[RMDB]
An RNA of 177 nucleotides, treated with DMS and read out base by base. DMS (dimethyl sulfate) methylates the pairing face of unpaired adenines and cytosines. Conditions: 150 mM KOAc, 10 mM MgCl2 and 150 mM bicine (pH 8.5), 24 C.
RNA sequence: GGGAACGACUCGAGUAGAGUCGAAAAAAGGACUGGUUCGCCAGUCCUUAUUCAUUCGUACGCAACGAAGCGUUAGUCAUUACGCAAAUGACUAAAAGCGUAUACGAAAGGACUUCGGUCCUUUCAACGCUGCAAUUCGUUUCGACGAAUUGCAGCGAAAAGAAACAACAACAACAAC
Reactivity to DMS in 0.01 (KOAc 150mM, MgCl2 10mM, bicine 150mM(pH8.5), 24C), signal-to-noise 2, nucleotides 027 to 126: a010a020g000g000a030c000u000g020g020u000u020c230g000c000c000a010g000u000c000c000u000u000a000u000u010c040a160u000u000c000g030u000a060c000g030c080a120a040c020g010a060a050g020c210g000u010u000a020g030u010c000a000u000u000a110c300g040c300a070a040a010u000g000a050c000u020a000a030a150a130g000c000g000u000a070u000a100c210g020a010a020a000g000g000a000c000u000u000c230g020g000u000c000c000u000u000u000c000a090a020